The data come from the RNA Mapping Database (RMDB), library OK1LIB.
Structure probing data (2A3 and DMS) for a 177-nucleotide construct.
2A3 adducts were read by reverse transcription with SuperScript II with manganese.
Conditions: 150 mM KOAc, 10 mM MgCl2 and 150 mM bicine (pH 8.5), 24 C.
[RMDB]
RNA sequence: GGGAACGACUCGAGUAGAGUCGAAAAGAACGCAUUGUUCAUGCUAUCAGCGUAUGGAAUGAGCCUCUACUUUUUCGCUGAUAGGUAGGUUCAUGUAUUGCGGAACGUGAAGGCUCAUGAUGUGUUAGAUGGUUAUGUUAUUCGUGACAUGGCUAUCAAAAGAAACAACAACAACAAC
Reactivity to 2A3 in 0.01 (KOAc 150mM, MgCl2 10mM, bicine 150mM(pH8.5), 24C), signal-to-noise 9, nucleotides 027 to 126: g030a030a000c000g000c010a020u010u040g020u050u030c010a000u040g020c000u010a020u030c010a000g000c010g020u040a040u060g030g050a050a020u010g000a000g000c000c000u010c010u020a060c030u060u060u020u020u060c000g000c000u010g010a010u010a010g010g040u060a020g010g050u040u090c010a000u050g040u060a040u010u160g010c000g010g000a030a010c030g030u020g020a020a000g000g000c000u000c000a000u020g020a020u020g030u000g010u010u030a020
Reactivity to DMS in 0.01 (KOAc 150mM, MgCl2 10mM, bicine 150mM(pH8.5), 24C), signal-to-noise 9, nucleotides 027 to 126: g010a060a050c020g010c050a030u010u010g010u010u010c010a040u010g010c010u000a040u010c070a050g010c050g020u010a040u010g010g010a110a050u000g010a010g000c000c000u000c030u010a060c110u010u020u010u010u010c010g010c010u020g010a020u000a010g010g020u020a060g010g000u020u020c050a050u030g010u020a060u020u010g010c030g000g010a040a040c300g000u000g010a050a030g000g000c000u000c010a050u010g000a050u010g010u000g000u000u000a100